Chemical mapping of a 177-nucleotide RNA with 2A3. Source: RMDB library RFM100, as collected in RNAgym. Values cover nucleotides 27 to 126. Conditions: 150 mM KOAc, 10 mM MgCl2 and 150 mM bicine (pH 8.5), 24 C.
RNA sequence: GGGAACGACUCGAGUAGAGUCGAAAACGUCUGACUACGCUACUCAUCCUUUCCGCCUCAAAUUAACGUUCGUAAAAUCAGCAAAAAACGAGGAUUUUUCGUUCAUAUACCUAACAAGAAAGCCGAUAAAGCAUCGGACUUUCGAGUCCGAUGCUUUAAAAGAAACAACAACAACAAC
Reactivity to 2A3 in 0.01 (KOAc 150mM, MgCl2 10mM, bicine 150mM(pH8.5), 24C), signal-to-noise 1, nucleotides 027 to 126: c000g020u000c000u000g030a050c090u030a000c040g030c040u060a050c040u020c000a000u150c000c000u020u020u000c000c060g000c000c020u150c230a090a090a000u070u040a080a000c060g000u000u020c000g040u070a000a000a000a000u010c040a020g070c180a000a000a000a000a000a300c160g000a090g090g000a000u000u000u000u000u090c000g000u000u050c040a000u020a000u030a150c000c000u060a120a000c040a010a000g100a220a060a040g070c060c060g000a050u050